About this RNA
Conditions: 150 mM KOAc, 10 mM MgCl2 and 150 mM bicine (pH 8.5), 24 C. Structure probing data (2A3) for a 177-nucleotide construct. Reactivities are rounded to 0.1 and cut off at 0 and 3. 2A3 adducts were read by reverse transcription with SuperScript II with manganese. It was measured as part of the RMDB library RFM100.
[RMDB]
RNA sequence: GGGAACGACUCGAGUAGAGUCGAAAAAUUGUUCUCCCAAGAAGUAUACUGGAAAUAUCCAGAUGUGGAGUUAUAAUUAAAAAUGAAGGCAAAAUAGCUUCCCUUAAAAGAAGUGAAACUAUUAAUUGUAUCCAGUGAUAUUCGUAUCACUGGAUACAAAAGAAACAACAACAACAAC
Reactivity to 2A3 in 0.01 (KOAc 150mM, MgCl2 10mM, bicine 150mM(pH8.5), 24C), signal-to-noise 2, nucleotides 027 to 126: a010u050u020g000u090u000c000u070c000c000c000a080a000g160a080a000g190u150a070u090a150c000u000g020g060a090a090a210u210a180u030c030c020a010g000a080u050g200u280g010g080a000g040u120u060a040u040a040a140u130u090a030a030a020a030a100u110g090a050a020g090g000c060a120a020a000a120u050a030g000c000u030u050c030c000c000u040u030a050a170a130a000g060a030a080g030u040g090a050a080a040c070u040a070u060u050a090a100u070u000